[RMDB]
RNA sequence: GGGAACGACUCGAGUAGAGUCGAAAACUUUCAGCGGGCUGGAGGAGCCGGGAGCGGAGGCGGAGGACCGAGCCAAAAACGUCAGCCGAGGCCGGGCGGCCCCGCUCGUGGCCCGUCCGCACUGUCCGUUGUAAAUCUCUUUCGAGAGAUUUACAACAAAAGAAACAACAACAACAAC
Reactivity to 2A3 in 0.01 (KOAc 150mM, MgCl2 10mM, bicine 150mM(pH8.5), 24C), signal-to-noise 6, nucleotides 027 to 126: c030u080u210u160c030a020g000c010g020g020g000c050u200g140g090a070g030g060a060g060c010c000g000g040g000a000g000c020g010g020a180g040g000c040g040g110a110g070g070a050c010c000g030a030g000c010c010a140a050a030a030a030c070g060u110c060a020g060c050c020g030a030g010g000c000c010g000g020g010c030g040g010c010c000c000c010g000c000u030c020g300u010g000g000c000c020c000g000u010c010c000g010c010a020c020u030g070u060c040c030
Reactivity to DMS in 0.01 (KOAc 150mM, MgCl2 10mM, bicine 150mM(pH8.5), 24C), signal-to-noise 2, nucleotides 027 to 126: c090u000u020u020c100a090g000c050g030g000g000c010u010g010g010a150g030g020a100g030c010c010g020g000g010a010g010c000g000g000a140g010g000c020g030g000a170g000g000a110c000c000g000a110g000c000c020a010a070a110a130a100c080g020u020c190a080g020c080c050g030a300g000g000c000c010g010g000g000c020g000g050c000c010c010c000g000c000u010c010g000u010g000g000c030c000c030g000u000c030c000g000c120a030c090u010g010u000c050c070